The data come from the RNA Mapping Database (RMDB), library OK2TST. The record gives the reactivity of an RNA of 177 nucleotides to 2A3 and DMS. As a SHAPE reagent, 2A3 marks flexible, mostly unpaired nucleotides at the ribose 2'-OH. Conditions: 150 mM KOAc, 10 mM MgCl2 and 150 mM bicine (pH 8.5), 24 C. DMS adducts were read by reverse transcription with MarathonRT. For DMS, 827 sequencing reads were counted.
RNA sequence: GGGAACGACUCGAGUAGAGUCGAAAAGAUUCACGUUCGUGAACAUGUCCUUUCAGGGCCGAUAUAGCUCAGUUGGUAGAGCAGCGCAUUCGUAAUGCGAAGGUCGUAGGUUCGACUCCUAUUAUCGCAUUCUUCGGACCUUCGGGUCCGAAGAAUGAAAAGAAACAACAACAACAAC
Reactivity to 2A3 in 0.01 (KOAc 150mM, MgCl2 10mM, bicine 150mM(pH8.5), 24C), signal-to-noise 1, nucleotides 027 to 126: g040a250u030u000c020a020c040g100u300u300c190g000u120g000a020a010c000a180u110g040u000c030c000u130u030u100c090a110g000g020g020c050c040g010a020u010a010u040a130g020c000u000c010a020g050u150u070g050g150u220a010g000a000g000c050a000g020c000g000c000a020u090u150c100g110u250a080a020u000g000c000g000a030a010g020g030u110c050g010u010a020g000g030u040u000c070g010a000c020u010c010c010u010a010u010u040a010u020c060g000
Reactivity to DMS in 0.01 (KOAc 150mM, MgCl2 10mM, bicine 150mM(pH8.5), 24C), signal-to-noise 1, nucleotides 027 to 126: g010a300u010u000c000a030c020g010u020u020c180g040u050g000a010a020c100a070u010g000u000c000c000u010u020u010c210a110g020g020g000c130c010g040a060u000a030u000a120g000c010u010c020a050g000u010u010g010g010u040a000g000a060g000c000a300g000c000g020c020a030u000u010c300g000u000a240a030u000g000c010g000a030a020g050g000u020c050g030u000a030g010g010u000u000c040g000a300c090u000c000c030u000a020u000u000a010u000c010g000